[RMDB]
RNA sequence: GGGAACGACUCGAGUAGAGUCGAAAACGAUGGGAGGCGCGCUACCAGCGCGAUCCCGACGCCCAAUCACCUGCGGGCGGGGUGAGUUCGUCUCUUAACGACAUGACGCACUGGCUGGCCAUGGUGCUAGUUCGGCAUUUUUCGAAAUGCCGAACUAAAAAGAAACAACAACAACAAC
Reactivity to 2A3 in 0.01 (KOAc 150mM, MgCl2 10mM, bicine 150mM(pH8.5), 24C), signal-to-noise 1, nucleotides 027 to 126: c030g020a080u110g060g040g020a020g300g280c000g020c000g040c010u150a290c100c110a050g000c010g000c010g000a000u040c010c000c030g000a000c000g000c010c010c000a010a080u060c010a030c010c030u060g030c130g040g000g010c030g040g060g040g020u050g030a040g020u020u090c020g050u020c010u010c040u140u080a120a040c060g040a000c030a070u200g000a020c020g010c040a010c060u040g100g040c010u010g020g020c010c000a060u100g080g000u050g000c050
Reactivity to DMS in 0.01 (KOAc 150mM, MgCl2 10mM, bicine 150mM(pH8.5), 24C), signal-to-noise 2, nucleotides 027 to 126: c150g020a170u020g000g000g020a000g010g000c000g040c000g000c010u030a120c280c210a230g100c000g020c020g000a130u000c000c000c000g020a070c040g030c000c000c020a150a170u000c090a000c040c020u000g000c150g000g000g000c020g010g000g000g000u010g010a100g020u000u000c120g030u000c000u000c140u000u010a090a130c140g010a090c120a050u020g000a080c010g000c070a050c050u000g000g010c030u000g030g010c020c050a140u010g000g000u000g000c300